The record gives the reactivity of an RNA of 177 nucleotides to 2A3 and DMS.
High DMS reactivity at an A or C suggests that its Watson-Crick edge is free.
The DMS profile rests on 13,726 reads.
Conditions: 150 mM KOAc, 10 mM MgCl2 and 150 mM bicine (pH 8.5), 24 C.

RNA sequence: GGGAACGACUCGAGUAGAGUCGAAAAAUGGGGAUUAACAAACCGAACGUCCGCUUUGUCGUGCAUUUUGAUAUCCCACGCACCAUCGAAUCCUACUAUCAGGAAACGGGGCGCGCCGGGCGUGAUAAGCACCAUAUUUAUUCGUAAAUAUGGUGCUAAAAGAAACAACAACAACAAC
Reactivity to 2A3 in 0.01 (KOAc 150mM, MgCl2 10mM, bicine 150mM(pH8.5), 24C), signal-to-noise 6, nucleotides 027 to 126: a000u090g030g000g000g030a020u080u100a070a050c030a070a040a000c040c040g040a060a010c020g010u000c020c010g030c100u140u140u180g100u130c070g060u090g070c070a080u050u050u030u150g100a060u060a060u120c000c010c000a000c000g020c000a040c010c010a120u190c010g010a020a010u000c020c000u060a140c050u140a120u300c110a020g000g000a000a010a020c010g000g000g010g000c010g000c000g000c030c030g000g010g000c010g000u020g020a050u040a190
Reactivity to DMS in 0.01 (KOAc 150mM, MgCl2 10mM, bicine 150mM(pH8.5), 24C), signal-to-noise 9, nucleotides 027 to 126: a040u000g000g010g000g010a070u010u000a080a100c130a070a100a070c060c040g000a110a050c050g010u000c010c020g020c210u000u000u010g010u000c100g020u010g010c060a060u000u000u000u000g010a140u000a090u000c010c010c000a250c050g020c010a020c000c010a030u010c010g010a030a300u000c000c000u000a100c230u010a120u010c200a020g000g000a000a040a300c020g010g000g000g020c030g010c030g020c160c030g010g000g010c040g010u000g000a090u010a080

It was measured as part of the RMDB library OK2TST.